An RNA of 207 nucleotides, treated with DMS and 2A3 and read out base by base.

RNA sequence: GGGAACGACUCGAGUAGAGUCGAAAAGAAGAUCUUCCACUGGCGUUGACUGAUUCUGUUGGAUGUGUAUUCUCUCAUCAUAUUCUCUAUACUACGAAUUCCUUUCUAGCACAGCGAAAUAUUGAAAUCGAUGACUUUACGUUUCCAGAAGGGCUCGAUCAAGUGACAUGUUCGCAUGUCACUUGAUAAAAGAAACAACAACAACAAC
Reactivity to DMS in 0.01 (KOAc 150mM, MgCl2 10mM, bicine 150mM(pH8.5), 24C), signal-to-noise 2, nucleotides 027 to 156: g000a130a060g010a060u000c070u000u010c020c040a110c060u000g000g010c010g010u010u000g000a120c070u010g010a100u000u010c040u010g040u000u000g010g030a090u020g020u020g010u000a090u000u000c020u000c040u000c040a110u000c050a060u000a080u000u000c010u000c020u010a090u000a030c010u000a040c090g020a130a140u010u000c090c060u000u000u010c020u000a070g040c060a030c050a050g070c030g020a030a050a070u000a090u010u010g020a070a050a100u000c020g030a130u000g040a060c020u000u010u010a080c080g020u010u000u010c040c010a060g030a040a090g040g030g030c040u000c050g020
Reactivity to 2A3 in 0.01 (KOAc 150mM, MgCl2 10mM, bicine 150mM(pH8.5), 24C), signal-to-noise 3, nucleotides 027 to 156: g080a030a020g020a060u050c010u040u010c040c000a030c060u080g030g000c040g030u120u130g080a070c040u040g030a170u080u090c040u070g110u110u050g020g020a030u040g040u020g040u090a120u100u040c090u010c020u010c010a080u030c000a000u050a090u140u050c050u000c010u070a080u030a180c090u020a020c110g080a060a040u110u120c030c000u050u080u060c050u100a010g030c050a030c020a080g020c040g070a030a070a010u220a120u100u150g070a050a060a050u070c050g020a050u070g020a030c010u050u030u120a040c030g020u040u010u040c020c020a020g050a040a040g080g000g010c020u010c030g050

For 2A3, 1,459 sequencing reads were counted. It was measured as part of the RMDB library OK3TST.